[RMDB]
RNA sequence: GGGAACGACUCGAGUAGAGUCGAAAAAGAACACCAAAUGUUUAUCUAUACCCUGGACCUAACAGCUGGACUCCAAACUAAUAUCCGUUGUGUUUUCCACAUAGUAGCUAGAGUAAUCAUUUAAACCAUCAGUCAAAUUAGGAUGCUCCUGUGCUCCCGCUCUAUGAUCAUUCGUGAUCAUAGAGCGAAAAGAAACAACAACAACAAC
Reactivity to 2A3 in 0.01 (KOAc 150mM, MgCl2 10mM, bicine 150mM(pH8.5), 24C), signal-to-noise 2, nucleotides 027 to 156: a010g030a010a020c050a030c030c010a010a080a070u110g020u060u020u050a160u090c080u040a060u080a110c010c000c030u000g000g030a050c020c010u050a110a070c050a050g000c070u030g030g030a090c030u020c040c030a010a150a090c130u170a050a080u060a100u160c040c060g070u020u070g030u020g060u030u000u010u000c060c010a040c030a040u090a020g080u120a010g020c040u040a000g000a000g040u100a070a010u060c030a050u020u090u100a080a060a050c040c030a070u080c060a010g130u080c070a030a030a250u080u040a100g000g010a030u040g030c000u040c010c040u050g040u050g020c020u000c010c000